[RMDB]
RNA sequence: GGGAACGACUCGAGUAGAGUCGAAAAAUCCUUCUUUCCGAUUAUUCCUUUGAUGUUCCCCAGCCAGGGAUUUUCAUCCUCGAGCUUCUUAAUUUUCUUCUUGGCCUUCCGGAGCUCCCUCUCGAGUAUAUCCGUUCCUUCGGGAACGGAAAAAGAAACAACAACAACAAC
Reactivity to 2A3 in 0.01 (KOAc 150mM, MgCl2 10mM, bicine 150mM(pH8.5), 24C), signal-to-noise 2, nucleotides 027 to 129: a000u080c060c000u030u000c020u000u060u030c010c020g120a130u080u020a040u150u040c000c050u190u020u260g030a070u160g070u010u000c030c000c000c000a020g020c000c030a020g030g010g000a000u000u060u090u070c050a020u020c000c000u030c000g000a140g000c020u010u000c000u050u140a210a140u020u040u010u080c010u050u010c000u030u020g010g000c040c000u020u030c000c030g050g000a070g000c010u000c010c000c000u040c000u000c000g010a010g030u070a010u000a000
Reactivity to DMS in 0.01 (KOAc 150mM, MgCl2 10mM, bicine 150mM(pH8.5), 24C), signal-to-noise 2, nucleotides 027 to 129: a000u030c050c010u030u000c080u030u040u030c090c020g010a000u110u020a140u000u030c060c040u000u080u030g060a060u000g000u070u000c000c000c000c150a120g080c090c100a070g020g040g000a110u000u000u000u000c160a080u020c060c000u000c080g060a070g030c170u000u100c090u040u080a110a120u020u000u010u050c120u040u040c140u060u000g000g000c000c040u020u030c070c020g020g000a140g040c090u000c010c050c010u000c030u000c070g000a050g030u040a090u070a080
An RNA of 170 nucleotides, treated with 2A3 and DMS and read out base by base. The reactions ran in a buffer of 150 mM KOAc, 10 mM MgCl2 and 150 mM bicine (pH 8.5), at 24 C. For 2A3, 1,625 sequencing reads were counted.